[RMDB]
RNA sequence: GGGAACGACUCGAGUAGAGUCGAAAAGAAGAAAGGUACCAGAUGGAUCUUGAAGCAGGGAAAUGACUGCUUGGGCCUCUCAGGGAACCCUGUGUAAACAUCUGCAGCCUUGGGGCUCCUGAGCUAAGAGAUCACCAAUGUUCGCAUUGGUGAUCUCAAAAGAAACAACAACAACAAC
Reactivity to DMS in 0.01 (KOAc 150mM, MgCl2 10mM, bicine 150mM(pH8.5), 24C), signal-to-noise 2, nucleotides 027 to 126: g000a100a090g000a010a050a020g050g000u010a120c300c000a070g030a020u040g000g000a040u010c070u010u000g010a080a300g010c000a000g030g010g000a050a090a050u000g030a160c060u050g000c020u000u020g000g000g000c060c010u030c070u000c060a020g000g010g000a130a190c060c000c000u000g010u000g020u010a050a300a110c010a040u000c070u000g000c130a300g010c020c050u000u010g000g000g000g030c030u000c020c050u000g000a030g010c100u000a090a220
Reactivity to 2A3 in 0.01 (KOAc 150mM, MgCl2 10mM, bicine 150mM(pH8.5), 24C), signal-to-noise 3, nucleotides 027 to 126: g170a020a000g060a070a120a010g020g020u080a100c010c020a010g000a110u060g040g010a060u130c100u210u230g050a050a010g020c020a040g000g030g080a060a090a100u180g060a070c050u030g000c000u030u020g000g010g020c000c000u050c010u010c030a030g050g050g050a100a140c020c000c000u030g000u000g030u030a060a060a050c020a070u040c030u100g010c030a030g100c000c010u030u040g010g000g010g000c000u010c010c000u090g020a000g010c000u020a190a010
Conditions: 150 mM KOAc, 10 mM MgCl2 and 150 mM bicine (pH 8.5), 24 C. Chemical mapping of a 177-nucleotide RNA with DMS and 2A3.